Source: RMDB library OK3TST, as collected in RNAgym.
Structure probing data (2A3 and DMS) for a 207-nucleotide construct.
For 2A3, 2,886 sequencing reads were counted.
Values cover nucleotides 27 to 156.
The reactions ran in a buffer of 150 mM KOAc, 10 mM MgCl2 and 150 mM bicine (pH 8.5), at 24 C.
RNA sequence: GGGAACGACUCGAGUAGAGUCGAAAAAGUCGAUGAGACUGUAGCACGAACUCAAUCUGAGAGAUCGGAGGCGGCUGAGUGCGACCAAGAAACUUCUUCCGAACCCACUUCUGUGGUAGAAGAAGAAGAACAACAAGAAUUACCACCAGAACCUGAAUCAUAACUAUGUCUUCGGACAUAGUUAUGAAAAAGAAACAACAACAACAAC
Reactivity to 2A3 in 0.01 (KOAc 150mM, MgCl2 10mM, bicine 150mM(pH8.5), 24C), signal-to-noise 4, nucleotides 027 to 156: a010g010u010c030g010a120u160g020a060g010a050c010u010g020u010a050g020c010a010c030g020a100a000c000u000c040a020a040u010c010u030g020a030g010a020g030a150u060c010g020g020a020g020g000c030g030g000c180u080g140a020g020u020g010c000g000a010c020c000a030a010g000a040a080a010c000u000u000c000u010u010c000c000g020a060a070c020c020c010a000c000u280u150c160u300g020u010g000g020u050a020g050a040a000g000a000a000g010a000a010g030a040a030c040a010a010c010a010a040g080a130a050u130u090a100c040c040a040c030c030a050g040a100a040c030c030u080g040a080a060
Reactivity to DMS in 0.01 (KOAc 150mM, MgCl2 10mM, bicine 150mM(pH8.5), 24C), signal-to-noise 3, nucleotides 027 to 156: a040g020u000c010g020a170u040g010a300g000a050c030u020g000u000a100g000c020a070c030g000a130a130c030u010c000a300a230u000c000u000g000a080g000a300g000a230u000c030g050g000a080g020g030c110g010g040c030u000g020a160g010u000g000c000g010a130c050c030a090a110g000a110a070a080c020u020u000c000u000u000c010c000g010a260a300c300c010c000a030c050u010u000c160u010g060u010g000g040u000a060g010a160a040g000a030a000g010a030a020g020a100a090c010a040a080c020a030a140g000a120a100u000u000a050c030c020a040c000c030a080g000a110a140c090c010u010g000a100a170